[RMDB]
RNA sequence: GGGAACGACUCGAGUAGAGUCGAAAACACACCCCCAGUCGGCGGGCCGGCUACUCUUCUUUUCCUUUCCUCGUCCUCCCCGGUCAGCCUCCAGAGUUCCUCUUCUUCUUCCUUGCUGAGGCUCUUUAAACAGAGUCGUUCGCGACUCUGAAAAGAAACAACAACAACAAC
Reactivity to 2A3 in 0.01 (KOAc 150mM, MgCl2 10mM, bicine 150mM(pH8.5), 24C), signal-to-noise 5, nucleotides 027 to 129: c050a010c000a010c000c010c000c010c010a020g070u050c020g030g040c010g020g030g040c010c010g000g010c000u050a060c020u020c000u070u010c000u010u080u020u070c010c000u030u060u070c000c020u040c010g050u060c000c000u030c020c010c000c000g000g010u020c010a010g020c000c000u030c020c000a040g000a010g060u030u040c010c000u000c000u050u000c020u040u010c000u030u040c010c020u020u060g020c020u030g030a040g020g010c010u010c000u010u120u080a070a050a000
Reactivity to DMS in 0.01 (KOAc 150mM, MgCl2 10mM, bicine 150mM(pH8.5), 24C), signal-to-noise 5, nucleotides 027 to 129: c060a090c170a300c080c010c010c030c060a080g050u020c040g020g020c030g030g030g000c060c000g030g040c020u000a080c080u030c040u000u000c030u010u020u000u020c040c000u010u040u030c040c030u000c000g020u030c050c060u010c000c000c000c000g050g000u020c100a110g020c020c000u000c020c030a050g020a130g050u000u000c000c040u000c000u020u020c050u000u000c040u010u000c040c000u000u000g020c000u000g020a150g020g010c000u030c020u000u000u000a060a080a120